[RMDB]
RNA sequence: GGGAACGACUCGAGUAGAGUCGAAAACGGUAUUGGUCAAGGCUAUACCGACAGCGCACCUUCAAAAGGGCGCUUAAUCCCCGGCCAAGCGCCGAAAUAUGAAUAGACACAGCUGGGCUGGUAGGGCAAAACAUGGCGAUCUUCGGAUCGCCAUGAAUCUAUAAGUAUCCUUCGGGAUACUUAUAGAAAAAGAAACAACAACAACAAC
Reactivity to 2A3 in 0.01 (KOAc 150mM, MgCl2 10mM, bicine 150mM(pH8.5), 24C), signal-to-noise 2, nucleotides 027 to 156: c000g010g000u020a010u070u160g010g010u120c100a130a140g160g000c000u000a000u000a020c000c010g010a010c050a020g000c000g020c040a300c110c030u080u100c110a080a100a050a070g020g000g000c000g010c010u000u000a000a010u000c020c010c000c000g000g000c000c040a080a080g020c130g040c190c010g020a000a110a000u200a090u090g090a090a080u100a090g040a010c080a010c000a070g010c020u080g010g010g000c040u010g050g040u010a090g070g060g010c020a030a030a030a020c010a000u000g000g020c080g000a000u000c040u010u040c090g030g000a000u010c010g010c000c000a000u000g000a010a000
Reactivity to DMS in 0.01 (KOAc 150mM, MgCl2 10mM, bicine 150mM(pH8.5), 24C), signal-to-noise 2, nucleotides 027 to 156: c060g000g030u000a000u000u000g060g010u000c060a070a170g030g000c010u000a080u000a060c000c000g010a180c170a050g000c000g010c000a090c000c010u010u020c130a080a130a260a090g020g020g000c010g020c000u010u000a030a090u000c020c030c010c010g020g030c010c030a070a070g050c070g040c010c010g000a000a060a070u010a120u000g000a220a130u000a110g000a100c030a090c030a210g060c030u000g000g000g020c050u000g050g000u000a050g020g030g020c050a090a050a130a170c000a000u000g000g000c000g010a020u000c010u010u010c300g040g000a040u010c000g000c000c000a000u000g000a010a080

The record gives the reactivity of an RNA of 207 nucleotides to 2A3 and DMS.
Source: RMDB library M2RFOK, as collected in RNAgym.
For 2A3, 783 sequencing reads were counted.
DMS adducts were read by reverse transcription with MarathonRT.